[RMDB]
RNA sequence: GGGAACGACUCGAGUAGAGUCGAAAAGUGUGUAUACAAUUAAUGGAUAUAUUCACCACGGGCUAUUCUACAUACCUUCUGCUCCAGCGCCCACCGCGCGGACAUCGUCGGGACAAGCAGCUGCGCGCCGAUGGGUCUGCAACGCGUGUCGCCGGUGCUUUCGCAAUUGUUUCGACAAUUGCGAAAGAAAAGAAACAACAACAACAAC
Reactivity to 2A3 in 0.01 (KOAc 150mM, MgCl2 10mM, bicine 150mM(pH8.5), 24C), signal-to-noise 1, nucleotides 027 to 156: g030u040g000u000g030u020a000u010a070c070a110a140u100u290a260a050u260g070g000a030u010a040u010a020u070u080c010a130c110c030a020c100g090g000g000c090u070a100u060u180c030u150a100c020a060u100a070c000c010u020u000c040u050g020c000u010c020c040a010g020c010g020c070c060c000a010c000c040g000c050g020c000g000g010a020c020a200u090c040g110u020c010g000g000g160a190c040a300a040g090c040a020g080c120u260g080c060g000c010g000c020c000g010a010u000g050g000g000u000c020u060g090c040a050a100c020g030c030g010u080g000u100c090g010c080c000g090g010u010g030

An RNA of 207 nucleotides, treated with 2A3 and read out base by base. 2A3 adducts were read by reverse transcription with SuperScript II with manganese. Reactivities are rounded to 0.1 and cut off at 0 and 3. High 2A3 reactivity points to a flexible backbone, as in loops and unpaired stretches.